[RMDB]
RNA sequence: GGGAACGACUCGAGUAGAGUCGAAAAUACGGAAACCAUCCGACAACAAGGACGAUCUGCCGUACGGAAACCAUCCGUUAUCGGAUGGGAAAGCAUGCAAUAAGAUAGAACGCCUCAAUCUCACACGAUCUGUUGUAGGCCGGAUGGGAAAGCAUGCAGCAUAAAGAGUUUUCGAACUCUUUAUGCUAAAAGAAACAACAACAACAAC
Reactivity to DMS in 0.01 (KOAc 150mM, MgCl2 10mM, bicine 150mM(pH8.5), 24C), signal-to-noise 4, nucleotides 027 to 156: u010a030c000g020g010a040a040a080c010c000a030u000c000c000g030a230c050a130a120c300a090a190g020g020a210c040g030a040u000c040u000g000c020c020g020u000a100c060g010g010a120a090a090c010c000a010u000c000c010g040u000u000a120u000c040g010g020a020u010g010g010g000a010a060a080g000c010a020u000g020c000a050a090u000a070a080g010a140u000a090g000a060a180c040g010c010c010u000c010a060a060u010c040u000c040a080c060a120c130g010a070u000c040u010g020u000u000g020u010a080g000g020c010c010g000g000a080u000g010g000g000a020a050a150g010c000a030u000g000c000
Reactivity to 2A3 in 0.01 (KOAc 150mM, MgCl2 10mM, bicine 150mM(pH8.5), 24C), signal-to-noise 6, nucleotides 027 to 156: u080a000c000g010g020a010a010a030c000c000a000u020c010c010g020a040c030a250a030c040a060a060g090g040a080c030g010a020u010c010u020g020c000c000g030u030a080c070g080g080a060a040a030c000c000a000u000c000c010g090u060u130a200u300c050g000g010a000u000g000g000g020a100a000a000g000c010a000u010g010c000a000a100u040a130a020g010a030u060a030g140a070a010c010g020c010c000u030c010a030a080u020c030u070c050a080c000a030c150g090a150u050c060u160g070u070u030g060u170a020g010g000c000c000g000g000a000u000g030g000g000a030a000a000g010c010a000u010g000c020